Conditions: 150 mM KOAc, 10 mM MgCl2 and 150 mM bicine (pH 8.5), 24 C. This 207-nucleotide RNA was probed chemically with 2A3 and DMS. The 2A3 profile rests on 6,412 reads. Reactivities are rounded to 0.1 and cut off at 0 and 3. 2A3 is a SHAPE reagent: it acylates the 2'-hydroxyl of flexible nucleotides of all four kinds. For DMS the reverse transcriptase was MarathonRT. Values cover nucleotides 27 to 156.

RNA sequence: GGGAACGACUCGAGUAGAGUCGAAAAGAUAUGGAUUUGUGGAGCUCUGGAUUACGAAGAACUUCGCUCGGAAACGAGCGAAGGGAGUAAUCCCAGAGCGUUGAAACAAAUCCUAAGUCAAAACGAUGUCGUAUCUGUUCGCAGAUACGACAUCGAACAAUGCUUAUCUGUUCGCAGAUAAGCAUUGAAAAGAAACAACAACAACAAC
Reactivity to 2A3 in 0.01 (KOAc 150mM, MgCl2 10mM, bicine 150mM(pH8.5), 24C), signal-to-noise 3, nucleotides 027 to 156: g010a010u070a030u140g000g000a000u000u000u000g010u010g020g030a040g000c000u010c010u010g010g000a000u000u010a010c050g120a280a110g030a090a030c000u000u000c000g000c000u000c000g000g020a070a080a050c010g000a000g000c010g000a000a010g010g000g000a040g000u000a000a000u020c050c020c170a060g020a000g000c010g000u040u020g000a010a010a000c000a000a000a000u000c000c000u010a100a010g040u020c030a020a030a070a090c020g000a010u000g000u010c000g000u000a000u000c000u010g080u080u070c260g000c100a000g000a010u010a000c000g000a000c000a000u000c000g000a000a000
Reactivity to DMS in 0.01 (KOAc 150mM, MgCl2 10mM, bicine 150mM(pH8.5), 24C), signal-to-noise 2, nucleotides 027 to 156: g000a100u010a200u000g000g000a050u010u000u000g000u000g060g040a300g030c010u000c020u000g010g010a080u000u000a000c000g010a120a230g000a070a140c000u000u000c000g030c000u000c020g010g020a160a110a270c010g010a010g030c000g010a000a000g030g010g000a250g000u000a000a010u000c100c030c050a000g000a010g050c000g010u000u010g000a190a160a050c000a020a000a020u000c010c000u020a050a080g010u020c050a040a120a130a190c000g010a010u000g010u000c000g030u000a000u000c000u000g000u000u010c300g050c050a020g010a010u000a010c030g010a020c000a000u000c000g000a040a130